[RMDB]
RNA sequence: GGGAACGACUCGAGUAGAGUCGAAAAUUAGCUCGUGACUUAACAGUCAUUGCCAAAGACGGUACAUUAGAUCCUGUUAUAGGACGUGAUAAAGAAAUUACACGUGUAAUUGAAGUAUUAAGUAGACGAUGUAUUCCUCGUUCGCGAGGAAUACAUCAAAAGAAACAACAACAACAAC
Reactivity to DMS in 0.01 (KOAc 150mM, MgCl2 10mM, bicine 150mM(pH8.5), 24C), signal-to-noise 3, nucleotides 027 to 126: u020u040a070g010c020u010c030g020u000g000a050c010u020u000a080a090c160a060g010u000c000a000u040u020g030c010c100a080a140a150g020a030c090g000g040u010a030c130a080u020u020a100g010a100u010c040c010u030g000u010u020a050u040a040g000g000a040c060g000u000g010a080u010a020a100a050g000a070a060a020u000u000a030c000a070c220g050u000g010u000a010a030u000u000g010a110a050g010u000a070u010u010a090a070g020u030a110g010a080c090
Reactivity to 2A3 in 0.01 (KOAc 150mM, MgCl2 10mM, bicine 150mM(pH8.5), 24C), signal-to-noise 4, nucleotides 027 to 126: u070u020a000g020c000u000c030g050u030g030a040c030u070u090a020a000c020a050g040u050c020a030u000u130g070c010c000a130a060a020g130a060c050g050g000u080a090c060a020u040u220a050g030a090u060c000c050u010g060u170u060a150u140a090g000g060a010c010g020u030g010a070u090a120a100a040g220a040a050a060u030u040a000c110a000c030g140u200g040u110a030a060u090u110g080a070a010g030u120a050u200u050a070a110g120u100a030g050a070c100
Chemical mapping of a 177-nucleotide RNA with DMS and 2A3. The DMS profile rests on 3,703 reads. The reactions ran in a buffer of 150 mM KOAc, 10 mM MgCl2 and 150 mM bicine (pH 8.5), at 24 C.